[RMDB]
RNA sequence: GGGAACGACUCGAGUAGAGUCGAAAAGAUGGAAUCCGGUGUGCAUAUCCGGGGUGUUAAUCCGGACACCGGUAACAGCGAUAACACCAUGAAGGCGGAUAACCCGCGCAAUGCUUUCUACUGGCGGUUUGUGGAAAUGGGGACCGUGAAUAUGCCACCUCGGAGUAAUAUUCGUAUUACUCCGAGGAAAAGAAACAACAACAACAAC
Reactivity to 2A3 in 0.01 (KOAc 150mM, MgCl2 10mM, bicine 150mM(pH8.5), 24C), signal-to-noise 2, nucleotides 027 to 156: g060a030u050g020g020a020a080u040c000c010g040g000u000g000u060g110c140a150u020a060u220c000c010g030g000g000g020u140g020u230u230a100a120u020c000c000g000g000a010c010a000c040c040g000g000u000a010a030c010a010g040c000g030a010u010a080a050c050a050c070c000a020u120g070a070a070g110g000c010g000g010a040u130a050a060c040c000c010g040c010g000c030a030a020u060g030c010u000u040u070c040u080a100c040u050g010g000c010g020g090u020u060u020g010u030g000g020a000a110a070u180g000g000g000g000a010c000c000g000u000g000a030a020u150a050u110g020c000c010a010